[RMDB]
RNA sequence: GGGAACGACUCGAGUAGAGUCGAAAAGACGUUGGCUUGUAUCUGCACAGUCAGAUUAGCUGUGUAGAUGACACAAGGCAACUUGUGUUACGCAUAGAGUAAAUCUGGCUCUGUGCCGACGUCGCCACUAGAGCUUUCUAUUCGUAGAAAGCUCUAGAAAAGAAACAACAACAACAAC
Reactivity to DMS in 0.01 (KOAc 150mM, MgCl2 10mM, bicine 150mM(pH8.5), 24C), signal-to-noise 5, nucleotides 027 to 126: g010a000c010g010u000u000g010g010c030u000u020g010u010a070u010c160u010g000c010a010c070a010g010u000c030a030g010a060u000u010a120g010c000u000g010u010g020u000a060g010a190u000g010a000c010a000c000a010a000g010g010c290a070a100c000u000u010g000u000g000u000u000a030c080g010c010a010u000a000g000a050g010u000a060a040a040u000c030u000g000g000c010u010c100u010g010u000g010c010c000g000a000c000g010u000c010g000c020c020a190
Reactivity to 2A3 in 0.01 (KOAc 150mM, MgCl2 10mM, bicine 150mM(pH8.5), 24C), signal-to-noise 5, nucleotides 027 to 126: g010a000c000g010u010u000g010g020c030u110u160g120u140a130u090c090u160g000c010a010c000a020g010u040c010a000g020a080u050u050a020g010c010u010g000u000g000u020a100g030a130u020g000a000c000a000c000a010a010g010g010c020a050a060c000u000u000g000u000g000u010u010a020c040g000c020a020u020a020g050a020g130u100a040a050a080u020c020u020g020g000c020u010c020u030g040u070g000c000c000g000a000c000g000u000c010g000c010c000a030

Source information: Chemical mapping of a 177-nucleotide RNA with DMS and 2A3. The reactions ran in a buffer of 150 mM KOAc, 10 mM MgCl2 and 150 mM bicine (pH 8.5), at 24 C. The DMS profile rests on 8,895 reads. For 2A3, 12,303 sequencing reads were counted. Reactivities are given for positions 27 through 126.